[RMDB]
RNA sequence: GGGAACGACUCGAGUAGAGUCGAAAAGAUAUGGAGAUAAGCUCGAUAAGUCGGUGUCGGAAACGACACUCGACUUUUGACGAGCGAAACUCCUAAGUCAAAACAUGUUAUCUUCGGAUAACAUGAACACCGUCAACUUGUUCGCAAGUUGACGGUGAAAAGAAACAACAACAACAAC
Reactivity to DMS in 0.01 (KOAc 150mM, MgCl2 10mM, bicine 150mM(pH8.5), 24C), signal-to-noise 1, nucleotides 027 to 126: g000a010u000a220u010g000g000a040g010a020u000a040a220g000c000u000c000g000a190u000a030a000g000u000c000g010g020u000g020u000c010g000g000a050a030a070c000g010a040c010a010c000u040c000g000a000c000u000u010u000u010g010a110c090g000a010g010c000g000a010a220a220c000u010c000c000u010a000a140g010u010c010a150a070a070a160c010a000u030g010u000u000a010u010c010u010u040c290g010g010a010u000a000a040c000a020u000g000a050a110

The record gives the reactivity of an RNA of 177 nucleotides to DMS. The DMS profile rests on 867 reads. The reactions ran in a buffer of 150 mM KOAc, 10 mM MgCl2 and 150 mM bicine (pH 8.5), at 24 C. For DMS the reverse transcriptase was MarathonRT. Values cover nucleotides 27 to 126.